Chemical mapping of a 177-nucleotide RNA with 2A3 and DMS.
The RNA was probed in 150 mM KOAc, 10 mM MgCl2 and 150 mM bicine (pH 8.5) at 24 C.
Reactivities are given for positions 27 through 126.

[RMDB]
RNA sequence: GGGAACGACUCGAGUAGAGUCGAAAAUUGUGGUCAAGACCUUGGCGUAGUAUCCAAGCUUGUCAAGGUUCCUAUUGACUUAACAAUGAUUGAGUUUAUGUUAUGGUGUAAGGAUGGACAGGGGAAAGUGAUAGCGGAGUUUCGACUCCGCUAUCACAAAAGAAACAACAACAACAAC
Reactivity to 2A3 in 0.01 (KOAc 150mM, MgCl2 10mM, bicine 150mM(pH8.5), 24C), signal-to-noise 1, nucleotides 027 to 126: u000u000g000u010g020g000u040c040a040a010g010a010c000c000u000u000g010g000c060g020u070a000g000u030a050u120c140c060a100a090g000c030u010u000g000u010c000a000a040g000g040u000u050c010c030u110a140u000u020g010a000c010u030u080a000a010c040a030a070u030g060a090u050u140g090a080g150u110u100u090a140u140g050u020u130a070u190g090g000u050g040u030a080a030g100g030a040u050g000g020a020c010a080g000g020g020g050a040a160a040
Reactivity to DMS in 0.01 (KOAc 150mM, MgCl2 10mM, bicine 150mM(pH8.5), 24C), signal-to-noise 2, nucleotides 027 to 126: u000u000g070u000g000g000u010c000a010a060g000a020c020c000u010u000g000g000c050g000u010a010g010u000a070u020c270c170a150a170g000c000u000u000g010u000c000a000a010g000g000u000u000c050c270u000a140u000u010g000a030c000u000u000a080a010c030a050a020u000g000a170u010u000g000a070g010u010u010u000a050u010g000u010u000a080u010g010g010u010g010u020a070a070g000g000a050u000g000g000a060c040a050g000g010g000g010a090a050a070